Structure probing data (DMS and 2A3) for a 177-nucleotide construct.
RNA sequence: GGGAACGACUCGAGUAGAGUCGAAAAGCUGAAAUUGUUUGAGCGCGUACGUGGGCGAUUACAUCCUACCGUGCAAGGACUGCGUCUGUUUGAAGAAGUGCAACGAUCCUGGUACGGACUGGAUCGACUAAAUCCGGUAUUUCGAUACCGGAUUUAGAAAAGAAACAACAACAACAAC
Reactivity to DMS in 0.01 (KOAc 150mM, MgCl2 10mM, bicine 150mM(pH8.5), 24C), signal-to-noise 9, nucleotides 027 to 126: g010c040u000g000a050a080a130u010u000g010u000u000u010g010a100g020c050g020c070g010u000a050c120g010u000g010g000g010c070g010a090u000u000a100c170a080u000c010c010u000a110c010c000g020u000g010c020a050a030g000g010a050c090u000g000c030g010u000c010u000g010u010u020u010g010a100a050g000a040a040g010u010g010c030a060a130c160g000a110u000c010c000u000g010g020u000a020c020g000g010a150c140u000g000g000a020u000c080g020a220
Reactivity to 2A3 in 0.01 (KOAc 150mM, MgCl2 10mM, bicine 150mM(pH8.5), 24C), signal-to-noise 4, nucleotides 027 to 126: g050c040u040g030a040a060a130u220u140g120u070u080u150g050a040g010c050g000c020g010u050a040c040g050u070g040g010g000c030g030a060u080u100a050c030a040u010c010c010u010a030c020c000g020u020g010c020a020a010g030g010a030c020u030g000c020g000u010c020u080g220u200u290u300g090a070a020g030a040a030g060u160g100c020a050a020c080g030a060u020c000c000u020g000g010u040a030c040g020g040a060c030u010g000g000a020u020c050g040a070
Values cover nucleotides 27 to 126. For 2A3, 4,204 sequencing reads were counted. Source: RMDB library OK2TST, as collected in RNAgym. DMS adducts were read by reverse transcription with MarathonRT. The DMS profile rests on 17,854 reads.